An RNA of 177 nucleotides, treated with 2A3 and DMS and read out base by base. The reactions ran in a buffer of 150 mM KOAc, 10 mM MgCl2 and 150 mM bicine (pH 8.5), at 24 C. In probing experiments dimethyl sulfate is read out at A N1 and C N3, which are open when not base-paired.
RNA sequence: GGGAACGACUCGAGUAGAGUCGAAAACCUAGCCGCUUGUUUUGCUCGCAGCCGGUCUGGAGCAAAGCUCAUCGGAACUGACAAUUCUGUCGUCCUCUCGCGGAAAUAUACAUCGUUUCCAUGGCUGUUCAAAGUGAUUAUUCGUAAUCACUUUGAAAAAAGAAACAACAACAACAAC
Reactivity to 2A3 in 0.01 (KOAc 150mM, MgCl2 10mM, bicine 150mM(pH8.5), 24C), signal-to-noise 9, nucleotides 027 to 126: c000c000u010a030g060c010c010g020c040u040u050g010u010u010u010u010g010c000u000c010g300c030a010g020c030c090g240g020u080c020u020g010g000a000g000c000a010a010a000g000c020u030c040a110u110c040g020g020a080a070c070u130g030a010c030a050a200u210u080c080u150g040u040c010g020u030c000c020u060c020u040c030g030c030g060g000a010a060a000u200a010u030a040c070a070u070c060g010u010u020u000c020c020a060u080g100g000c040u070g080
Reactivity to DMS in 0.01 (KOAc 150mM, MgCl2 10mM, bicine 150mM(pH8.5), 24C), signal-to-noise 9, nucleotides 027 to 126: c010c010u000a110g010c010c010g010c100u010u010g010u010u000u000u000g010c000u000c010g010c020a030g010c050c160g010g020u020c030u000g010g000a020g000c010a010a010a030g000c010u010c220a060u010c110g000g000a070a050c060u030g020a040c070a080a190u020u020c100u000g010u000c020g000u000c020c020u000c090u010c110g020c040g000g000a050a060a060u010a080u020a100c180a150u010c050g010u000u000u000c010c010a110u020g000g010c060u010g010